Annotation:
The record gives the reactivity of an RNA of 207 nucleotides to 2A3. For 2A3, 771 sequencing reads were counted. It was measured as part of the RMDB library RNAMAK. The reactions ran in a buffer of 150 mM KOAc, 10 mM MgCl2 and 150 mM bicine (pH 8.5), at 24 C.
RNA sequence: GGGAACGACUCGAGUAGAGUCGAAAAACCUUUGUGUACGUACGAAUCUAGUUGUCAGCUAAUAACCAUGCCCAUUGGGCAUGGUAUUAGCUUGGAUUUACUAGACUAUACGUACACUCUGGUAAAAGGGCAAAGAGGUUUCGACCUCUUUGCCCAAUCGUGUGAUAAGCUUCGGCUUAUCACACGAAAAAGAAACAACAACAACAAC
Reactivity to 2A3 in 0.01 (KOAc 150mM, MgCl2 10mM, bicine 150mM(pH8.5), 24C), signal-to-noise 1, nucleotides 027 to 156: a000c000c030u000u000u000g000u000g000u000a000c020g010u000a020c110g070a220a300u000c010u000a000g000u010u010g030u000c000a000g000c000u000a010a000u030a150a220c010c000a040u030g010c050c020c090a280u190u300g000g000g000c040a000u020g000g020u000a000u000u000a000g050c000u000u010g000g010a000u240u130u060a010c000u000a000g000a000c000u040a010u000a000c000g000u000a000c010a000c000u000c000u000g000g010u060a020a060a100a120g000g020g000c010a000a000a000g010a000g020g040u080u190u120c210g130a030c000c000u000c000u010u000u000g000c000c000c000a000a000